Conditions: 150 mM KOAc, 10 mM MgCl2 and 150 mM bicine (pH 8.5), 24 C. The record gives the reactivity of an RNA of 177 nucleotides to DMS and 2A3. For 2A3, 3,779 sequencing reads were counted. Values cover nucleotides 27 to 126.

RNA sequence: GGGAACGACUCGAGUAGAGUCGAAAAGAAAAGAGCGUAAUCGCGUCUUGACGUGAGUGAGACUAGACUGUAGUCUAUCCCAAGUGGGAUAGGAUAUCUCACAAUACGCUGAUCUACAGUCAAAAGAACCUCACGUGAGUUUCGACUCACGUGAGGUAAAAGAAACAACAACAACAAC
Reactivity to DMS in 0.01 (KOAc 150mM, MgCl2 10mM, bicine 150mM(pH8.5), 24C), signal-to-noise 1, nucleotides 027 to 126: g000a060a070a140a060g000a080g020c010g070u000a080a300u000c000g000c010g000u020c040u040u000g000a030c000g000u070g000a080g000u000g010a010g020a030c130u000a050g000a000c010u000g000u000a000g000u010c040u000a010u000c000c000c000a300a210g000u050g020g010g010a010u000a000g040g030a210u010a030u000c050u000c000a010c040a140a210u000a000c000g010c050u000g000a030u010c000u000a000c000a000g020u010c000a250a010a080a110g000a080
Reactivity to 2A3 in 0.01 (KOAc 150mM, MgCl2 10mM, bicine 150mM(pH8.5), 24C), signal-to-noise 4, nucleotides 027 to 126: g240a010a070a000a000g020a000g010c010g010u030a040a090u050c000g020c010g000u030c080u140u250g080a020c010g000u000g010a040g000u000g000a000g000a000c010u030a080g000a000c000u010g000u000a000g000u000c000u000a000u020c030c010c010a080a110g300u300g050g000g000a000u020a000g020g000a050u030a030u050c000u010c010a000c000a020a020u040a010c000g000c000u010g020a020u000c000u000a000c000a000g010u010c010a000a000a020a040g110a020